[RMDB]
RNA sequence: GGGAACGACUCGAGUAGAGUCGAAAAUCAGAAUCAGGCCGGAAUGUUUAGCGCUCCGUAAACACGGUCGUACAUCCAGCCGGUAGCCUGGUUCCUUGCAUUGAGUGAUGUACGGAGUUUAUAGAGCAAAAGAAAGACCUGUUCGCAGGUCUUUCAACUUUAAGGUAAGCUUCGGCUUACCUUAAAGAAAAGAAACAACAACAACAAC
Reactivity to 2A3 in 0.01 (KOAc 150mM, MgCl2 10mM, bicine 150mM(pH8.5), 24C), signal-to-noise 4, nucleotides 027 to 156: u090c010a010g070a000a010u000c000a000g020g000c020c020g060g040a170a070u110g060u130u160u130a140g050c060g000c030u010c020c010g010u010a010a040a010c040a030c120g150g130u150c010g020u000a000c010a010u010c040c010a010g080c030c020g030g020u050a030g030c000c000u010g000g000u020u020c020c020u060u120g050c020a160u050u150g070a030g080u160g020a010u000g000u010a010c010g000g020a100g010u020u030u020a020u010a020g040a000g010c020a050a060a060a010g000a000a000a000g000a000c000c000u010g010u010u060c210g010c080a000g000g000u000c000u000u000u000c000a000a000
Reactivity to DMS in 0.01 (KOAc 150mM, MgCl2 10mM, bicine 150mM(pH8.5), 24C), signal-to-noise 2, nucleotides 027 to 156: u000c040a050g020a050a040u000c000a060g010g020c010c030g030g000a170a140u000g000u000u010u000a120g020c120g010c010u010c000c010g030u000a010a010a040c020a170c060g020g030u000c010g000u000a010c000a030u000c000c040a240g050c040c060g000g020u000a080g000c070c000u010g000g000u000u000c000c020u000u000g020c080a120u010u000g010a230g000u010g010a020u000g010u000a010c020g020g000a150g010u000u010u000a010u000a050g000a050g050c020a080a050a120a140g000a020a000a010g000a020c010c000u000g020u000u010c300g030c020a000g020g000u000c000u000u000u000c000a000a110